[RMDB]
An RNA of 177 nucleotides, treated with 2A3 and DMS and read out base by base.
2A3 adducts were read by reverse transcription with SuperScript II with manganese.
The reactions ran in a buffer of 150 mM KOAc, 10 mM MgCl2 and 150 mM bicine (pH 8.5), at 24 C.
It was measured as part of the RMDB library OK2TRN.

RNA sequence: GGGAACGACUCGAGUAGAGUCGAAAACUAGGCCAAACCCCUGCACGGUGCCCAGGGCGAUCUGCGCGAUGCCCACGCACAGCAACGCCCAACGUCGCCAGGUCAUCGGUGAAUGUUGCCGCCGCGGAAGCGAGGCAGAAUUCGUUCUGCCUCGCUUAAAAGAAACAACAACAACAAC
Reactivity to 2A3 in 0.01 (KOAc 150mM, MgCl2 10mM, bicine 150mM(pH8.5), 24C), signal-to-noise 1, nucleotides 027 to 126: c010u050a110g030g060c040c000a120a000a190c040c020c010c000u030g070c060a030c090g000g090u040g040c000c020c050a080g000g000g000c010g070a040u040c010u030g000c000g000c020g080a070u100g050c000c040c020a000c050g040c010a010c000a040g030c030a030a080c020g000c010c020c010a030a030c070g030u020c010g010c000c010a030g000g090u010c030a000u040c020g020g020u090g050a120a120u110g040u080u070g070c040c010g000c040c020g050c040g070g020
Reactivity to DMS in 0.01 (KOAc 150mM, MgCl2 10mM, bicine 150mM(pH8.5), 24C), signal-to-noise 5, nucleotides 027 to 126: c040u000a080g020g010c010c060a080a110a160c080c040c020c040u000g010c070a070c060g010g020u010g010c040c030c060a180g020g000g000c020g000a050u000c010u000g000c230g000c020g000a070u010g010c010c040c050a190c040g000c040a030c070a050g000c080a050a070c040g010c020c010c020a060a080c250g010u000c030g010c020c020a110g010g000u010c060a040u010c050g000g020u010g000a070a040u000g000u000u000g010c070c030g000c030c030g010c090g000g000